[RMDB]
RNA sequence: GGGAACGACUCGAGUAGAGUCGAAAACUCUGAGUCUUCGGACUCAGAGAAACGGUUUCGACUCUGAUACCAACAAACGCGAGUUUGUUGGUAUAAUCGCAAAAAGGUGGGAGUUCGCUCCCACCAACCCAUAAUGUAUCUUCGGAUACAUUAUGGGAAAAGAAACAACAACAACAAC
Reactivity to DMS in 0.01 (KOAc 150mM, MgCl2 10mM, bicine 150mM(pH8.5), 24C), signal-to-noise 7, nucleotides 027 to 126: c000u000c010u000g000a010g010u000c000u000u010c210g030g010a010c000u000c000a010g000a000g000a040a060a080c300g010g010u000u000u000c000g010a010c000u000c000u000g010a030u000a000c010c000a000a010c000a000a000a000c000g000c300g000a180g020u000u000u000g000u000u000g010g010u000a000u000a030a040u000c020g020c250a050a060a060a070a050g010g020u000g010g010g010a020g020u000u000c230g010c000u000c000c000c000a000c010c010a010a020
Reactivity to 2A3 in 0.01 (KOAc 150mM, MgCl2 10mM, bicine 150mM(pH8.5), 24C), signal-to-noise 3, nucleotides 027 to 126: c000u010c000u000g000a000g010u000c000u030u100c250g050g000a000c000u000c000a000g000a000g000a010a000a000c080g170g010u000u010u010c010g000a000c000u000c000u010g020a010u010a010c000c000a000a000c000a000a000a000c020g030c020g040a050g050u000u000u000g000u000u000g000g000u000a000u000a000a000u010c010g020c080a050a050a060a080a150g000g010u010g010g000g010a000g020u080u100c240g050c050u010c000c000c000a000c000c000a000a000